[RMDB]
The record gives the reactivity of an RNA of 177 nucleotides to 2A3 and DMS.
It was measured as part of the RMDB library OK1LIB.
The DMS profile rests on 18,129 reads.

RNA sequence: GGGAACGACUCGAGUAGAGUCGAAAAGACGGGGCCGGAGCAGCUGCUGCCGUCACUGCCGGCGUCCUCGACGCGUCAGUUGGUGCGCAGGCGCACUGGUCACGCAGCGGAGAGUUCGAGGGUCCAGUAUUAAUCCGCUAUUCGUAGCGGAUUAAUAAAAAGAAACAACAACAACAAC
Reactivity to 2A3 in 0.01 (KOAc 150mM, MgCl2 10mM, bicine 150mM(pH8.5), 24C), signal-to-noise 8, nucleotides 027 to 126: g070a020c020g010g000g020g010c010c000g030g010a060g010c050a050g000c020u130g020c010u050g040c060c030g030u040c020a000c020u030g030c020c010g190g090c000g060u090c000c120u160c130g040a080c020g010c000g020u020c010a090g040u110u220g030g030u050g020c090g000c030a020g060g030c020g000c010a040c030u060g010g010u040c010a010c030g000c000a020g020c010g020g030a070g000a010g070u050u100c040g020a140g030g020g030u020c000c020a000g010
Reactivity to DMS in 0.01 (KOAc 150mM, MgCl2 10mM, bicine 150mM(pH8.5), 24C), signal-to-noise 5, nucleotides 027 to 126: g000a140c050g010g000g000g000c000c020g010g010a070g030c020a080g000c030u000g020c010u010g010c020c040g010u020c130a030c060u010g000c050c040g010g000c010g000u010c010c110u010c190g010a050c020g000c020g000u000c010a080g010u020u040g010g010u000g000c070g000c030a070g000g000c020g000c030a070c020u020g000g010u000c100a040c040g010c030a110g000c030g020g000a050g000a110g020u010u010c040g010a120g000g010g010u000c020c030a100g010